[RMDB]
RNA sequence: GGGAACGACUCGAGUAGAGUCGAAAAUAGGCGAACGAGAGGCCCUCUCAUGUGCGGAGUUGUCACGCUGACAGAAUUGUUAUGAUGUCCGAUUCCGGUAGCAUCGCGGCGAUGUUUUCAUAGGACAUCUUAUGAACCCAAGGGCUUCGGGGAAGCACGAUAAUAUCAGUUUCGACUGAUAUUAUCGAAAAGAAACAACAACAACAAC
Reactivity to DMS in 0.01 (KOAc 150mM, MgCl2 10mM, bicine 150mM(pH8.5), 24C), signal-to-noise 6, nucleotides 027 to 156: u000a060g020g020c020g000a090a090c060g020a140g010a070g030g020c010c010c010u000c060u000c060a100u000g030u000g000c050g010g010a220g020u000u000g020u010c030a100c060g020c030u000g000a140c030a070g010a080a110u000u010g030u010u010a090u000g010a050u000g020u000c020c010g000a190u000u010c060c050g020g030u010a050g010c020a040u000c020g040c120g030g010c130g020a040u010g010u000u000u000u000c060a090u000a140g020g010a040c030a020u000c010u000u000a050u010g010a060a100c020c020c050a080a070g010g020g010c020u000u000c020g020g020g020g000a120a100g030c060a170
Reactivity to 2A3 in 0.01 (KOAc 150mM, MgCl2 10mM, bicine 150mM(pH8.5), 24C), signal-to-noise 7, nucleotides 027 to 156: u150a020g050g000c010g040a050a030c050g010a060g010a010g120g000c010c020c000u020c020u020c010a100u150g050u060g040c060g020g030a090g030u080u060g040u100c060a030c100g030c070u050g030a010c020a040g120a110a110u140u080g040u070u070a070u150g010a000u000g000u000c010c010g030a070u150u070c060c020g050g030u040a010g010c000a010u010c040g030c090g210g040c100g020a010u010g030u020u070u050u080c060a060u090a050g000g010a000c000a010u000c000u010u010a050u040g030a020a030c020c010c010a030a030g010g000g000c000u050u020c020g000g000g000g040a070a010g040c040a000